[RMDB]
RNA sequence: GGGAACGACUCGAGUAGAGUCGAAAAAACAGAUUUUAUGAAUAGAAUCAUGGUAAAUACAUAUUGGUGGCGUUUCUUACAACUAAACAAGUCGUAAGGGAACCAGACCAUGUAUAUAUACCUGACAACGUCUCUAAAGAUUCGUCUUUAGAGACGUAAAAGAAACAACAACAACAAC
Reactivity to DMS in 0.01 (KOAc 150mM, MgCl2 10mM, bicine 150mM(pH8.5), 24C), signal-to-noise 6, nucleotides 027 to 126: a090a030c070a110g000a080u020u000u000u000a100u010g020a180a110u010a060g010a070a040u000c000a050u020g010g010u000a020a060a020u000a010c020a040u010a100u030u010g010g000u000g020g010c150g010u000u000u010c000u000u000a000c000a010a010c010u010a080a080a100c280a080a040g010u000c020g020u010a000a010g010g000g010a010a030c010c010a300g000a050c020c020a030u000g010u000a010u000a050u030a140u010a020c010c000u000g000a070c150a120
Reactivity to 2A3 in 0.01 (KOAc 150mM, MgCl2 10mM, bicine 150mM(pH8.5), 24C), signal-to-noise 9, nucleotides 027 to 126: a000a000c080a040g060a050u080u090u060u080a210u260g100a130a070u120a150g070a090a050u050c030a060u150g010g000u030a050a080a010u010a010c020a020u120a080u170u150g040g000u020g030g030c160g020u000u000u010c000u010u000a000c010a030a000c020u080a220a120a100c080a120a020g000u010c030g000u010a010a020g070g010g010a000a020c000c010a010g030a020c000c010a000u010g020u000a010u000a000u000a000u000a020c000c000u010g020a020c030a030